[RMDB]
RNA sequence: GGGAACGACUCGAGUAGAGUCGAAAAGCAGGUGCUGCAGUGGUUUGGUGACCAGGCCUGCGAGCAGCGCCCCUUCUCCAUCCACAACAUGUGCACCACCGGGCAGACCCAUGGGGUGAAGGCGGGGAUCUUACUAAAUCUUCGGAUUUAGUAAGAUAAAAGAAACAACAACAACAAC
Reactivity to DMS in 0.01 (KOAc 150mM, MgCl2 10mM, bicine 150mM(pH8.5), 24C), signal-to-noise 9, nucleotides 027 to 126: g010c160a120g010g020u000g010c080u000g010c030a200g010u000g000g010u000u000u000g010g010u010g010a130c140c030a050g000g010c010c000u010g020c080g010a110g010c020a030g010c080g010c010c010c060c040u010u000c020u000c010c040a070u000c030c020a050c050a090a120c130a080u010g010u010g010c030a060c050c020a070c060c060g000g000g010c090a090g000a130c050c030c030a090u000g000g000g010g020u000g000a070a080g010g010c090g010g000g000g000
Reactivity to 2A3 in 0.01 (KOAc 150mM, MgCl2 10mM, bicine 150mM(pH8.5), 24C), signal-to-noise 6, nucleotides 027 to 126: g050c070a040g020g000u030g020c010u020g000c020a050g010u050g040g030u050u070u060g070g020u130g080a160c080c010a010g010g020c000c030u070g020c020g010a040g000c010a010g010c000g010c020c000c000c000u040u040c020u000c010c010a040u030c020c010a040c010a120a100c030a140u170g030u060g080c020a030c010c010a020c010c040g030g060g000c060a040g030a140c000c000c040a060u100g060g010g000g020u070g070a040a020g040g020c090g000g010g000g010
The record gives the reactivity of an RNA of 177 nucleotides to DMS and 2A3. It was measured as part of the RMDB library OK2TST. The RNA was probed in 150 mM KOAc, 10 mM MgCl2 and 150 mM bicine (pH 8.5) at 24 C. Reactivities are rounded to 0.1 and cut off at 0 and 3. The 2A3 profile rests on 16,649 reads. The DMS profile rests on 24,927 reads.